[RMDB]
An RNA of 207 nucleotides, treated with DMS and 2A3 and read out base by base. For DMS, 1,528 sequencing reads were counted.
RNA sequence: GGGAACGACUCGAGUAGAGUCGAAAAUGAGAUGUUCGCAUCUCAAAAAUCCUAAGUCAGCUGAGGCUCGUGCUAGGUCCAGUCGGAAACGACUGAAGACCUUGGACCACGAGCUACCCACCAGCUGAUAUGGAAAAGGGUGCUAUUCGUAGCACCCGGCCUCAUAUAGGUUCGCCUAUAUGAGGCCAAAAGAAACAACAACAACAAC
Reactivity to DMS in 0.01 (KOAc 150mM, MgCl2 10mM, bicine 150mM(pH8.5), 24C), signal-to-noise 1, nucleotides 027 to 156: u000g000a000g000a000u000g000u000u010c290g050c050a020u000c000u060c010a000a170a040a070a120u000c000c000u000a080a220g010u000c020a020g000c010u030g000a120g010g000c000u000c000g040u010g020c000u000a000g020g010u000c000c000a030g000u000c010g000g010a240a200a300c030g000a040c000u000g010a040a070g030a000c000c040u010u000g070g010a120c180c030a010c060g000a030g010c030u000a000c090c010c000a300c040c000a050g010c000u040g030a010u000a090u000g000g000a020a120a110a130g040g040g000u000g000c000u000a040u000u000c270g040u000a010g000c010a000c000c000c000
Reactivity to 2A3 in 0.01 (KOAc 150mM, MgCl2 10mM, bicine 150mM(pH8.5), 24C), signal-to-noise 2, nucleotides 027 to 156: u120g010a000g010a000u010g010u060u220c280g030c130a000u000c000u000c020a000a000a010a000a140u050c030c000u070a140a030g020u010c000a000g000c000u000g000a010g010g020c000u000c000g000u020g030c040u020a010g010g000u010c000c010a010g000u000c010g030g040a120a080a070c020g010a010c000u020g010a140a060g010a000c000c010u020u050g040g030a050c100c000a000c000g000a010g000c000u000a000c000c000c020a060c000c000a000g000c000u000g000a000u000a050u050g030g010a010a090a100a150g010g000g000u030g000c000u000a030u090u160c230g110u080a000g000c000a000c000c000c020
Record summary:
For 2A3 the reverse transcriptase was SuperScript II with manganese.